[RMDB]
RNA sequence: GGGAACGACUCGAGUAGAGUCGAAAACGAAACAGGCGAUGCUAAGUCCGUGAAGCCGUUCCGGACCCUUCGGGGAAUGGAAAGUGGUGGAGCCGACGGACCAGACUUGCAGUAGGUGAGUGAUGGGCCUUUCCCAAACAUUCGUGUUUGGGAAAGGAAAAGAAACAACAACAACAAC
Reactivity to 2A3 in 0.01 (KOAc 150mM, MgCl2 10mM, bicine 150mM(pH8.5), 24C), signal-to-noise 1, nucleotides 027 to 126: c010g020a010a000a000c040a010g000g000c010g040a020u040g040c010u080a020a000g040u000c010c010g030u030g020a000a000g000c010c020g010u000u000c000c000g010g000a020c020c000c000u050u090c220g100g000g020g000a000a010u030g000g000a010a030a020g300u300g010g000u010g010g010a000g000c000c020g030a000c010g000g010a010c010c000a000g020a040c010u020u010g010c000a050g030u060a010g040g050u080g050a060g060u220g000a060u190g020g060g020
Reactivity to DMS in 0.01 (KOAc 150mM, MgCl2 10mM, bicine 150mM(pH8.5), 24C), signal-to-noise 5, nucleotides 027 to 126: c060g010a150a120a120c070a020g000g020c010g000a300u010g030c050u000a070a220g000u000c000c130g000u010g000a260a150g010c010c010g030u000u000c000c000g020g000a300c000c000c000u000u020c080g010g000g010g010a020a220u010g000g000a010a010a010g000u010g000g020u000g000g010a300g020c010c190g010a010c020g000g000a140c300c050a030g000a270c010u000u010g000c030a100g010u000a040g000g010u000g020a080g020u000g000a100u000g000g010g010